[RMDB]
RNA sequence: GGGAACGACUCGAGUAGAGUCGAAAACGCAUUGUUCAGGGGAUGAGCGUCGAGACGAUGGUGAUCGGCUGGUCUGCUGUACAGUAUGCAAAACUGUACGAGGUGCAAUGGCGCAAGGAUGGAGGUAACUGGAACAACGUUCCGCGCACUGCGACAAAUUUGUAAAGCGAUUCGUCGCUUUACAAAUAAAAGAAACAACAACAACAAC
Reactivity to DMS in 0.01 (KOAc 150mM, MgCl2 10mM, bicine 150mM(pH8.5), 24C), signal-to-noise 5, nucleotides 027 to 156: c040g000c060a170u000u000g020u010u000c060a130g010g010g010g010a080u000g010a070g030c050g030u010c040g010a140g020a070c030g000a090u000g020g050u010g000a110u000c050g020g000c030u010g020g010u000c040u000g020c040u010g010u000a010c000a030g010u000a060u000g010c300a090a090a070a030c010u000g020u000a030c000g000a080g020g010u000g020c020a050a120u000g010g020c050g020c100a110a070g010g020a100u000g020g010a070g030g000u000a050a100c050u000g020g010a070a070c040a080a110c080g010u000u000c010c030g020c080g020c050a070c090u000g010c040g000a120c070a040a110
Reactivity to 2A3 in 0.01 (KOAc 150mM, MgCl2 10mM, bicine 150mM(pH8.5), 24C), signal-to-noise 8, nucleotides 027 to 156: c030g020c040a050u030u090g040u080u060c060a040g000g010g010g030a030u050g030a040g040c030g040u050c030g040a040g010a050c060g040a060u070g030g040u060g030a080u070c050g040g010c020u040g000g040u040c050u060g030c010u040g010u000a000c000a010g020u050a030u210g160c070a040a100a030a010c010u000g000u010a010c020g040a070g010g030u070g000c040a060a090u110g040g000c030g000c040a030a040g040g010a040u060g000g030a020g030g010u050a060a020c050u050g020g030a030a020c040a040a030c120g030u040u010c020c010g010c000g000c020a100c070u090g010c010g030a030c060a030a190
This 207-nucleotide RNA was probed chemically with DMS and 2A3. Source: RMDB library OK3TST, as collected in RNAgym. Reactivities are given for positions 27 through 156. The reactions ran in a buffer of 150 mM KOAc, 10 mM MgCl2 and 150 mM bicine (pH 8.5), at 24 C.